[RMDB]
RNA sequence: GGGAACGACUCGAGUAGAGUCGAAAAUGCUUACCAAUGAUGCUGAAAAAUAAAUGUCUGAACAAAUGAUUUCUAUAUGAUAUCAACAUUUUCUCUGAGGUAAGCUAAAGGAACCGUUCGCGGUUCCCGUCAUAAAAAGGUUCGCCUUUUUAUGACGAAAAGAAACAACAACAACAAC
Reactivity to DMS in 0.01 (KOAc 150mM, MgCl2 10mM, bicine 150mM(pH8.5), 24C), signal-to-noise 4, nucleotides 027 to 126: u020g010c000u000u010a010c010c010a070a300u010g000a070u000g020c170u010g000a000a040a080a120a070u010a040a050a020u000g000u010c110u000g010a110a160c140a080a090a100u000g010a070u000u000u000c020u010a100u000a110u010g010a030u000a050u010c000a030a080c080a010u010u000u000u000c060u000c010u000g000a300g000g010u000a000a000g010c010u010a070a080a100g000g000a010a010c010c010g030u000u000c170g010c030g010g010u000u000c000c010
Reactivity to 2A3 in 0.01 (KOAc 150mM, MgCl2 10mM, bicine 150mM(pH8.5), 24C), signal-to-noise 5, nucleotides 027 to 126: u050g000c000u000u000a000c000c010a010a080u070g030a020u070g030c150u180g080a110a060a030a040a050u140a020a090a010u030g030u010c090u080g090a100a050c040a070a170a110u100g020a060u050u230u040c080u080a250u060a090u300g020a020u010a010u050c010a010a040c010a020u030u020u020u010c040u000c000u010g020a010g000g010u010a000a000g000c000u010a040a030a000g010g000a000a000c000c000g000u030u040c260g010c000g070g000u000u000c000c000